[RMDB]
RNA sequence: GGGAACGACUCGAGUAGAGUCGAAAAGAUAUGGAAUCCCAGUGGCUAGCUGUCAUGUCGGAAACGACAUCCCAGCUUGGACCCACGGGAUUCCUAAGUCAAACACCUUCACUUCGGUGAAGGUGAAGCUAAUAAGUCCGUUCGCGGACUUAUUAGCAAAAGAAACAACAACAACAAC
Reactivity to DMS in 0.01 (KOAc 150mM, MgCl2 10mM, bicine 150mM(pH8.5), 24C), signal-to-noise 2, nucleotides 027 to 126: g010a020u000a300u000g000g000a020a010u000c000c010c000a130g080u000g000g010c040u000a030g020c000u000g070u000c100a010u000g000u020c000g000g010a080a040a220c010g000a010c000a010u000c060c050c020a010g000c000u010u000g060g030a200c300c000c010a010c040g000g010g010a000u000u000c000c000u000a010a080g010u010c020a150a160a300c010a000c000c000u000u000c000a010c000u000u000c190g040g000u000g010a010a010g020g000u010g000a020a070
Reactivity to 2A3 in 0.01 (KOAc 150mM, MgCl2 10mM, bicine 150mM(pH8.5), 24C), signal-to-noise 2, nucleotides 027 to 126: g010a010u050a040u160g030g020a010a010u000c000c060c140a060g010u010g030g050c180u220a180g000c010u000g010u030c020a010u000g020u000c010g030g020a060a040a010c000g020a010c000a000u030c020c040c010a000g020c030u060u170g190g160a150c020c000c000a010c020g010g010g000a000u000u000c000c000u000a010a000g000u000c000a000a160a050c000a010c000c000u000u000c010a030c010u090u150c300g150g010u000g000a000a000g000g010u000g010a000a020